[RMDB]
Chemical mapping of a 207-nucleotide RNA with DMS and 2A3. It was measured as part of the RMDB library OK3TST. For DMS the reverse transcriptase was MarathonRT. The 2A3 profile rests on 25,902 reads. Reactivities are given for positions 27 through 156.

RNA sequence: GGGAACGACUCGAGUAGAGUCGAAAACGAUCCUCGAGAGAGGAUCGACGAGUCUUCGGACUCGAUUACCGCGUCGAUGUGCCGCGGGGCUACGAUGGUAUUGUGGGAAAGAAUACCAUUGUACCUUCUUGUCGUAGCCGAACAACUCGCACGUCAAAUCGAUUUAUCAUUUCGAUGAUAAAUCGAUAAAAGAAACAACAACAACAAC
Reactivity to DMS in 0.01 (KOAc 150mM, MgCl2 10mM, bicine 150mM(pH8.5), 24C), signal-to-noise 4, nucleotides 027 to 156: c040g020a020u000c000c000u000c000g010a300g020a300g000a010g020g000a020u000c000g020a090c030g000a040g000u000c000u000u000c300g040g010a050c000u000c010g000a080u000u010a260c010c000g010c040g020u000c050g020a020u010g020u000g000c060c030g030c010g020g020g020g010c010u000a020c000g000a050u010g010g000u000a020u000u000g010u000g010g000g000a150a150a210g010a150a170u000a070c020c000a010u000u000g010u000a020c020c010u010u000c120u010u000g020u000c010g030u000a030g010c020c000g030a090a080c070a050a100c120u000c050g020c000a010c010g010u010c010a070a220
Reactivity to 2A3 in 0.01 (KOAc 150mM, MgCl2 10mM, bicine 150mM(pH8.5), 24C), signal-to-noise 9, nucleotides 027 to 156: c020g000a000u000c000c000u010c010g050a050g000a010g000a000g050g000a000u000c000g000a020c000g000a000g000u000c000u040u150c270g080g010a000c000u000c000g000a060u120u170a080c000c000g000c000g020u040c130g000a010u010g000u000g000c000c000g000c010g020g030g010g000c000u000a000c000g010a010u140g000g000u010a010u010u050g010u010g010g020g050a100a230a110g150a100a110u120a120c000c000a000u000u020g000u010a000c000c000u150u220c120u140u270g010u010c010g000u000a000g000c000c000g010a040a010c030a030a060c030u070c090g000c000a000c000g010u000c000a040a080